[RMDB]
Structure probing data (2A3 and DMS) for a 177-nucleotide construct. For 2A3 the reverse transcriptase was SuperScript II with manganese. 2A3 is a SHAPE reagent: it acylates the 2'-hydroxyl of flexible nucleotides of all four kinds. The data come from the RNA Mapping Database (RMDB), library OK2TST. The reactions ran in a buffer of 150 mM KOAc, 10 mM MgCl2 and 150 mM bicine (pH 8.5), at 24 C. Reactivities are given for positions 27 through 126.
RNA sequence: GGGAACGACUCGAGUAGAGUCGAAAAUGGCGGCGGCUCAAUGACCUGUGGCGCCCGUUUGUGGCGUGCGAUAGUCGAGCCGCCUGUCACGUGCGCGGCCGCCCUGCUCCGUUUGACGCGAUGCAUAGCCAUUUAAUCGGUUCGCCGAUUAAAUGGCAAAAGAAACAACAACAACAAC
Reactivity to 2A3 in 0.01 (KOAc 150mM, MgCl2 10mM, bicine 150mM(pH8.5), 24C), signal-to-noise 2, nucleotides 027 to 126: u110g000g020c000g020g030c010g000g000c000u010c020a090a230u300g010a040c020c030u010g080u150g080g030c000g020c000c000c000g120u080u200u300g200u250g030g020c040g020u110g090c000g090a080u090a040g000u010c010g000a000g000c000c000g000c000c000u010g000u020c000a000c000g020u060g030c000g000c000g030g000c020c000g060c010c020c010u050g010c000u060c020c000g000u010u110u130g050a030c020g000c020g080a000u060g050c030a110u100a060
Reactivity to DMS in 0.01 (KOAc 150mM, MgCl2 10mM, bicine 150mM(pH8.5), 24C), signal-to-noise 1, nucleotides 027 to 126: u000g020g030c050g000g000c000g020g000c010u000c000a140a130u010g000a030c090c030u010g020u020g020g030c000g010c010c000c000g010u010u030u000g010u010g030g000c000g030u010g010c030g010a100u010a070g010u010c030g000a000g030c000c000g000c000c000u000g020u000c000a030c120g010u000g030c070g020c060g000g000c070c030g020c030c000c030u000g010c020u000c020c020g000u000u000u000g010a070c060g010c080g000a070u010g010c100a060u010a150